Source information:
The data come from the RNA Mapping Database (RMDB), library OK2TST. The record gives the reactivity of an RNA of 177 nucleotides to DMS and 2A3. The DMS profile rests on 2,196 reads. Conditions: 150 mM KOAc, 10 mM MgCl2 and 150 mM bicine (pH 8.5), 24 C.
RNA sequence: GGGAACGACUCGAGUAGAGUCGAAAAGUAUGAUCACGUAAAAACUUAGGGAUGGGAAGCUUACCAAAUGGGUUUCGAAACAGAACGGUAAUCGCAUACCAAUCUGCUAGUCCACCCACUACACCAAGAGUCCACUAUAUUUCGAUAUAGUGGACUCAAAAGAAACAACAACAACAAC
Reactivity to DMS in 0.01 (KOAc 150mM, MgCl2 10mM, bicine 150mM(pH8.5), 24C), signal-to-noise 4, nucleotides 027 to 126: g020u010a060u040g010a120u020c070a050c130g020u010a090a050a110a090a080c120u000u020a080g010g000g000a130u000g000g000g020a100a110g010c050u000u000a110c070c100a080a120a090u010g000g010g010u000u010u010c060g000a130a110a070c020a020g020a020a070c300g000g010u000a020a040u010c300g000c240a150u000a030c000c000a060a300u000c000u000g020c030u010a170g010u000c090c060a030c000c000c000a030c160u000a050c090a090c110c060a060a070
Reactivity to 2A3 in 0.01 (KOAc 150mM, MgCl2 10mM, bicine 150mM(pH8.5), 24C), signal-to-noise 3, nucleotides 027 to 126: g020u010a080u200g060a080u120c040a000c070g010u080a020a010a080a110a050c050u070u130a040g050g040g040a070u070g010g020g030a020a040g030c010u030u040a050c050c000a030a100a210u090g040g010g020u000u100u050c020g010a040a050a020c020a000g020a020a020c040g010g000u020a050a030u110c100g020c100a030u050a020c000c000a010a150u010c000u000g000c010u000a020g030u000c030c000a040c010c000c010a040c050u060a020c030a030c070c010a070a050